[RMDB]
RNA sequence: GGGAACGACUCGAGUAGAGUCGAAAAGCAUCACAGUACUGUGGUACAGAGAAGCACAUCGCACUGGAGGUGAUUUCUUCCAUCACCUGCGGCUCCAUGUACUUCGCUGUUCCACAGUACUGGAAACUUUACAUCGGUGUUUCGACACCGAUGUAAAAAAAGAAACAACAACAACAAC
Reactivity to DMS in 0.01 (KOAc 150mM, MgCl2 10mM, bicine 150mM(pH8.5), 24C), signal-to-noise 4, nucleotides 027 to 126: g000c120a110u030c120a200c010a010g010u000a000c000u000g010u000g000g000u000a020c000a010g000a040g010a020a010g020c080a000c000a010u000c300g020c220a120c020u000g000g000a020g010g030u030g000a020u000u020u070c200u030u030c260c110a080u000c000a000c000c000u010g000c000g020g010c040u010c060c280a030u000g010u000a040c000u000u000c000g010c000u000g000u000u000c000c000a020c000a000g010u000a000c000u000g000g010a040a090a070c190
Reactivity to 2A3 in 0.01 (KOAc 150mM, MgCl2 10mM, bicine 150mM(pH8.5), 24C), signal-to-noise 7, nucleotides 027 to 126: g070c040a060u110c040a010c010a050g010u000a000c000u000g000u000g010g000u000a000c000a000g010a000g010a000a000g000c010a000c000a010u020c030g010c030a020c050u060g050g250a000g000g010u010g010a020u060u100u090c120u200u050c090c050a000u000c000a000c000c000u110g070c000g010g000c010u000c020c020a000u000g000u000a020c000u000u000c010g000c030u000g000u010u000c000c000a000c000a000g000u000a000c000u000g000g000a000a000a010c010

Chemical mapping of a 177-nucleotide RNA with DMS and 2A3.
For 2A3 the reverse transcriptase was SuperScript II with manganese.
Conditions: 150 mM KOAc, 10 mM MgCl2 and 150 mM bicine (pH 8.5), 24 C.
Reactivities are given for positions 27 through 126.
For DMS the reverse transcriptase was MarathonRT.